[RMDB]
RNA sequence: GGGAACGACUCGAGUAGAGUCGAAAAGCACUCGGUUUUGCAGGGUAGCCUGGCAGGACACACAGCAUCCCCCUCUCAGUUUAGGAGAGCCGUCCUAAGAAUGGGGCUGGCUCUUAAAGGCACGAGACGUAAUCCUAACCUUCGGGUUAGGAUUACGAAAAGAAACAACAACAACAAC
Reactivity to DMS in 0.01 (KOAc 150mM, MgCl2 10mM, bicine 150mM(pH8.5), 24C), signal-to-noise 2, nucleotides 027 to 126: g010c030a070c120u020c070g000g000u010u000u010u000g020c080a130g010g000g000u040a110g020c010c000u000g000g010c040a050g000g050a060c050a060c240a080c080a020g030c020a060u010c020c000c000c050c010u020c000u000c050a040g000u000u020u020a150g040g000a000g010a020g000c030c000g010u000c000c000u000a110a170g050a120a180u050g000g000g000g040c000u020g060g040c000u000c000u000u000a020a140a140g000g000c050a080c060g020a050g000a240
Reactivity to 2A3 in 0.01 (KOAc 150mM, MgCl2 10mM, bicine 150mM(pH8.5), 24C), signal-to-noise 5, nucleotides 027 to 126: g010c010a020c090u070c060g040g000u020u010u050u100g010c020a020g010g030g070u160a090g160c000c000u020g120g020c030a020g020g030a030c000a000c010a000c010a170g010c010a080u030c010c000c000c000c000u010c010u000c010a140g030u090u080u130a220g070g010a010g000a010g000c000c000g030u020c000c000u130a250a170g230a200a140u300g030g030g020g000c070u120g060g000c000u000c010u010u000a040a010a000g040g000c020a000c200g020a000g000a010
An RNA of 177 nucleotides, treated with DMS and 2A3 and read out base by base. For 2A3 the reverse transcriptase was SuperScript II with manganese. Source: RMDB library RFM100, as collected in RNAgym. For DMS the reverse transcriptase was MarathonRT.